[RMDB]
RNA sequence: GGGAACGACUCGAGUAGAGUCGAAAAGUCUAGCGAACGGAUCCCACCCGGGAGACACGCAAGUCGCGAAUUACGCCGACCGGCCAAGGUCAAUCGCAGAACUCAACUGCAUGAGUAAGCUAGACGAAGUGCUAUCCUACUUCGGUAGGAUAGCACUAAAAGAAACAACAACAACAAC
Reactivity to 2A3 in 0.01 (KOAc 150mM, MgCl2 10mM, bicine 150mM(pH8.5), 24C), signal-to-noise 2, nucleotides 027 to 126: g010u010c000u020a000g000c020g030a060a070c030g070g000a050u020c000c000c040a040c020c010c000g000g050g000a050g020a020c000a000c050g030c020a160a090g110u100c050g020c000g010a050a140u280u130a130c100g000c040c020g000a020c020c020g020g000c000c040a070a000g030g030u010c000a050a060u050c080g070c000a030g030a200a110c060u100c150a030a140c020u050g010c010a020u050g010a000g020u020a040a010g000c010u010a010g000a000c000g000a020
Reactivity to DMS in 0.01 (KOAc 150mM, MgCl2 10mM, bicine 150mM(pH8.5), 24C), signal-to-noise 2, nucleotides 027 to 126: g010u000c000u000a000g040c000g000a300a070c110g020g040a040u000c010c000c000a210c300c030c060g000g000g000a180g000a040c020a250c000g000c000a110a280g010u010c150g000c040g030a070a060u010u000a110c170g010c050c000g040a130c030c090g000g000c110c030a160a170g030g000u000c040a040a210u000c120g020c000a010g000a040a170c220u010c130a060a110c100u020g020c060a060u020g000a090g000u000a060a260g010c000u000a020g040a020c000g010a100
Conditions: 150 mM KOAc, 10 mM MgCl2 and 150 mM bicine (pH 8.5), 24 C. Structure probing data (2A3 and DMS) for a 177-nucleotide construct. Reactivities are given for positions 27 through 126. DMS adducts were read by reverse transcription with MarathonRT. The 2A3 profile rests on 1,465 reads. The DMS profile rests on 739 reads. Values are in units of 0.01, from 0 to 300, in steps of 10.